[RMDB]
RNA sequence: GGGAACGACUCGAGUAGAGUCGAAAAGAUAUGGAGUGGUGAUCGCGAUAAGUCGGUGGUCGGAAACGACCACCCGACUUUUGACGCGACACCACUCCUAAGUCAAAUCCGAUCCUUCGGGAUCGGAGUUAAAUCCAUACUUCGGUAUGGAUUUAACAAAAGAAACAACAACAACAAC
Reactivity to 2A3 in 0.01 (KOAc 150mM, MgCl2 10mM, bicine 150mM(pH8.5), 24C), signal-to-noise 5, nucleotides 027 to 126: g010a000u030a020u110g000g000a000g030u020g060g040u050g060a300u060c010g000c020g080a130u080a300a030g000u010c010g000g010u020g010g000u020c000g010g020a040a040a010c000g000a000c020c010a000c000c000c010g000a000c010u040u010u020u200g110a070c060g000c000g000a000c000a000c000c010a010c010u000c000c000u010a010a010g000u000c000a000a000a160u000c000c000g000a000u000c000c010u070u160c300g150g000g000a000u000c000g000g010a010
Reactivity to DMS in 0.01 (KOAc 150mM, MgCl2 10mM, bicine 150mM(pH8.5), 24C), signal-to-noise 6, nucleotides 027 to 126: g000a020u000a300u010g000g000a020g040u000g000g010u000g000a140u000c000g020c000g030a140u000a020a000g020u000c010g010g030u000g000g000u000c010g020g000a040a060a140c000g010a030c000c000a010c080c040c020g020a000c000u000u000u000u010g020a210c090g020c000g000a010c000a010c010c000a000c000u000c000c000u000a000a060g000u010c020a120a130a300u000c000c000g000a010u000c000c000u000u020c220g040g020g010a000u000c000g010g000a010
This 177-nucleotide RNA was probed chemically with 2A3 and DMS. Reactivities are given for positions 27 through 126. For 2A3 the reverse transcriptase was SuperScript II with manganese. The RNA was probed in 150 mM KOAc, 10 mM MgCl2 and 150 mM bicine (pH 8.5) at 24 C. Source: RMDB library TTRDES, as collected in RNAgym. For 2A3, 15,358 sequencing reads were counted. For DMS, 12,125 sequencing reads were counted.